[RMDB]
RNA sequence: GGGAACGACUCGAGUAGAGUCGAAAAGUACGUCGAGCUAGGUACAUGAUCCGAUCUCUAGUCAUGGCUAGCAUGGUACCUAGGCUCUCAUGACAGUCAUGUAGUCAUGCAUGGGUACUACCAUGGCUGUGGCAGCUAGGUUCGCCUAGCUGCCACAAAAAGAAACAACAACAACAAC
Reactivity to DMS in 0.01 (KOAc 150mM, MgCl2 10mM, bicine 150mM(pH8.5), 24C), signal-to-noise 1, nucleotides 027 to 126: g020u000a030c090g010u000c150g000a040g020c020u010a010g000g010u000a030c030a100u010g000a100u010c080c100g010a110u030c090u020c040u000a050g040u010c030a090u000g000g010c090u000a030g010c010a110u010g010g000u000a020c000c000u000a050g000g010c010u000c080u030c050a020u000g000a050c050a100g000u000c120a030u000g000u000a010g010u000c020a060u000g010c130a050u010g000g000g030u010a030c020u000a100c120c040a030u010g000g010c080
Reactivity to 2A3 in 0.01 (KOAc 150mM, MgCl2 10mM, bicine 150mM(pH8.5), 24C), signal-to-noise 1, nucleotides 027 to 126: g030u040a050c070g060u030c050g070a030g020c000u010a010g000g040u010a040c030a020u080g010a070u070c050c070g110a250u080c170u000c020u140a030g030u010c050a140u180g080g000c000u000a020g000c000a060u060g130g000u050a010c000c000u030a060g090g000c000u030c000u010c030a040u080g000a020c050a030g050u100c000a000u040g040u140a040g040u030c020a050u100g030c030a080u080g080g000g040u030a010c000u010a030c030c000a000u000g040g000c030